[RMDB]
RNA sequence: GGGAACGACUCGAGUAGAGUCGAAAAGAUAUGGAGAGCGUUGAUCUUGAACUACAGGGAUGUAUCGGAAACGAUACUGACCUGCAAGGGAGCUCUCCUAAGUCAAACCAGCACUUCGGUGCUGGAACUGGUGUAUCAUGUUCGCAUGAUACACCAGAAAAGAAACAACAACAACAAC
Reactivity to 2A3 in 0.01 (KOAc 150mM, MgCl2 10mM, bicine 150mM(pH8.5), 24C), signal-to-noise 2, nucleotides 027 to 126: g030a010u080a040u150g000g000a010g000a020g000c000g170u300u000g000a020u050c010u000u050g050a140a140c140u210a070c230a000g030g010g040a050u060g040u000a010u000c010g050g050a090a070a040c030g000a000u010a020c000u020g140a030c010c000u000g020c010a020a000g000g020g010a020g000c000u000c010u000c000c010u000a030a010g030u020c010a000a010a110c020c010a000g000c000a010c020u100u210c300g130g000u020g000c000u020g000g020a010a040
Reactivity to DMS in 0.01 (KOAc 150mM, MgCl2 10mM, bicine 150mM(pH8.5), 24C), signal-to-noise 2, nucleotides 027 to 126: g000a020u000a300u000g020g000a020g000a000g030c000g010u000u000g000a030u000c020u000u000g000a170a060c130u020a300c070a000g000g000g000a300u010g000u000a020u020c000g000g000a120a040a200c020g020a010u010a000c000u000g000a300c010c010u010g000c000a020a000g020g000g000a040g000c000u000c000u000c000c000u000a000a100g000u000c060a090a110a250c000c010a020g030c000a020c000u000u020c260g030g010u000g000c010u000g020g000a000a080